Chemical mapping of a 177-nucleotide RNA with 2A3 and DMS. For DMS the reverse transcriptase was MarathonRT. The reactions ran in a buffer of 150 mM KOAc, 10 mM MgCl2 and 150 mM bicine (pH 8.5), at 24 C. It was measured as part of the RMDB library OK2TRN. In probing experiments dimethyl sulfate is read out at A N1 and C N3, which are open when not base-paired. For 2A3 the reverse transcriptase was SuperScript II with manganese. For 2A3, 7,497 sequencing reads were counted.
[RMDB]
RNA sequence: GGGAACGACUCGAGUAGAGUCGAAAAUCACGCCUGAAUUAUGAUUAUAUCUGCCGUAUGCAUGUACUCCGAUGAUAUUGUUUUUUGAAUCUCUUAUCGCACUACCACUUUGUCCUGAAAAUGUGUCUCUUAGUGAUACUUUCGAGUAUCACUAAGAAAAAGAAACAACAACAACAAC
Reactivity to 2A3 in 0.01 (KOAc 150mM, MgCl2 10mM, bicine 150mM(pH8.5), 24C), signal-to-noise 7, nucleotides 027 to 126: u070c020a010c060g040c000c040u030g070a100a070u160u120a110u210g100a040u070u150a090u090a040u190c030u040g050c030c010g050u070a030u080g030c040a030u070g010u060a060c010u000c040c030g050a070u050g030a030u050a090u140u140g110u110u070u040u000u030u140g120a120a080u010c030u000c010u090u060a040u090c030g000c030a030c060u050a070c020c020a050c030u080u060u050g030u030c010c000u040g080a060a060a040a050u160g060u040g070u030c010
Reactivity to DMS in 0.01 (KOAc 150mM, MgCl2 10mM, bicine 150mM(pH8.5), 24C), signal-to-noise 9, nucleotides 027 to 126: u000c080a090c120g010c040c040u000g010a100a090u000u010a070u000g000a080u010u000a100u010a150u000c030u010g010c050c040g020u000a060u000g010c070a040u000g010u000a060c050u000c030c040g010a090u000g010a080u010a070u000u000g010u000u000u000u000u000u010g010a080a070u000c040u000c040u000u000a070u000c070g010c040a060c040u000a060c040c020a040c050u000u000u000g010u000c010c010u000g000a050a050a060a110u010g010u000g010u010c100